[RMDB]
Structure probing data (2A3) for a 177-nucleotide construct.

RNA sequence: GGGAACGACUCGAGUAGAGUCGAAAAGUAAAGUCCUCUUACCUGAAGCCAUGCCAGCGCUAGUGUCUGGCAUUACAGUUACAGCAAUCGCUUUAGUUGGUUCAACAGCAGUUGCAGGUGUAAUUGGCUCGACAUCGUUGUUCGCAACGAUGUCGAGAAAAGAAACAACAACAACAAC
Reactivity to 2A3 in 0.01 (KOAc 150mM, MgCl2 10mM, bicine 150mM(pH8.5), 24C), signal-to-noise 2, nucleotides 027 to 126: g120u130a090a050a060g070u010c000c000u000c010u010u100a110c020c000u020g190a120a030g150c050c080a020u150g000c000c000a110g000c090g080c180u110a120g140u200g060u260c000u000g040g000c000a000u070u000a050c050a000g000u020u010a000c000a000g000c000a050a120u030c050g000c080u000u150u300a070g000u010u100g000g250u120u100c000a090a040c010a040g010c000a000g000u000u000g050c090a120g190g000u000g070u070a080a100u010u070g030g000
Values cover nucleotides 27 to 126. Conditions: 150 mM KOAc, 10 mM MgCl2 and 150 mM bicine (pH 8.5), 24 C.